[RMDB]
RNA sequence: GGGAACGACUCGAGUAGAGUCGAAAAGUUCCAGGGGGACGCAUCACCGAAAAGGGGGCACGUGUGAACAUCUCUGCUGCUCUGCAGUACAUUGCCUGCUGGAUCUCUGGACAGGGCGCUGUGGCUGGAACGCCAUAAGGUUCGCCUUAUGGCGUUCAAAAGAAACAACAACAACAAC
Reactivity to DMS in 0.01 (KOAc 150mM, MgCl2 10mM, bicine 150mM(pH8.5), 24C), signal-to-noise 3, nucleotides 027 to 126: g010u010u000c030c010a140g010g020g010g010g010a200c130g000c090a090u010c060a110c030c000g000a040a070a090a090g000g010g010g030g000c100a040c140g020u000g000u020g010a050a100c160a080u000c060u000c080u010g020c060u000g000c060u010c110u000g050c030a040g010u010a070c080a070u010u010g020c070c020u000g000c060u000g020g030a140u010c040u000c050u010g010g010a060c080a060g010g010g000c050g000c080u000g000u020g020g000c080u000g040